[RMDB]
RNA sequence: GGGAACGACUCGAGUAGAGUCGAAAAGAUAUGGAUUGUUGACGGGAGGUUAUCGGAAACGAUAGACCGAAGAACGUCACCAAUCCUAAGUCAAAGAAAAAAUGCACCUUCGGGUGCAUUUUUUCAACACUUCAACCUACUUCGGUAGGUUGAAGUGAAAAGAAACAACAACAACAAC
Reactivity to DMS in 0.01 (KOAc 150mM, MgCl2 10mM, bicine 150mM(pH8.5), 24C), signal-to-noise 1, nucleotides 027 to 126: g010a070u000a300u000g000g020a010u000u000g000u000u000g000a010c000g040g000g020a160g000g050u000u000a010u000c000g000g000a110a050a150c000g010a030u000a000g040a030c000c000g040a100a160g000a100a180c010g000u000c000a000c000c000a000a000u000c010c000u010a000a120g030u030c030a100a120a170g000a000a000a060a000a040a010u000g010c020a020c010c000u000u030c190g030g010g000u000g000c000a000u000u000u000u000u010u010c000a140a230
An RNA of 177 nucleotides, treated with DMS and read out base by base. Source: RMDB library TTRDEL, as collected in RNAgym. Reactivities are given for positions 27 through 126. The reactions ran in a buffer of 150 mM KOAc, 10 mM MgCl2 and 150 mM bicine (pH 8.5), at 24 C. The DMS profile rests on 913 reads.